The data come from the RNA Mapping Database (RMDB), libraries RFM100 and RFMREP. This 177-nucleotide RNA was probed chemically with 2A3 and DMS. The 2A3 profile rests on 1,846 reads. For DMS the reverse transcriptase was MarathonRT.
RNA sequence: GGGAACGACUCGAGUAGAGUCGAAAAUUUACACCUUGGUCAUGGUAGCUAAGAAUAUUGUAUCUAAAAUUGGGGAGUGGGGAGAUGUUUGGUUAUAUUCCCUUCUCAUCGAUGGUCUAGAUGUGCGAAACGAGGUAUCUUUCGAGAUACCUCGUUUAAAAGAAACAACAACAACAAC
Reactivity to 2A3 in 0.01 (KOAc 150mM, MgCl2 10mM, bicine 150mM(pH8.5), 24C), signal-to-noise 3, nucleotides 027 to 126: u000u000u030a000c010a030c000c000u050u090g050g020u060c120a150u120g000g060u150a030g030c010u070a060a130g080a090a100u270a110u230u170g070u030a030u070c040u080a050a080a170a050u060u110g010g000g050g000a030g040u070g000g010g010g000a020g000a010u040g120u060u150u170g100g000u190u000a040u020a000u120u080c000c000c000u040u020c000u000c000a110u090c030g040a030u070g060g000u020c020u020a000g000a090u010g010u040g040c040g020
Reactivity to DMS in 0.01 (KOAc 150mM, MgCl2 10mM, bicine 150mM(pH8.5), 24C), signal-to-noise 4, nucleotides 027 to 126: u010u020u040a100c140a060c050c010u010u020g020g010u010c050a070u000g000g010u020a060g010c060u000a070a070g010a070a090u030a100u020u000g010u000a020u000c020u000a030a070a110a060u000u000g010g010g000g010a050g010u010g010g010g020g020a050g020a040u010g020u000u010u020g060g000u020u020a060u030a070u010u000c010c000c000u000u000c010u000c010a040u000c020g000a030u010g000g010u020c070u000a050g010a030u000g000u010g020c140g010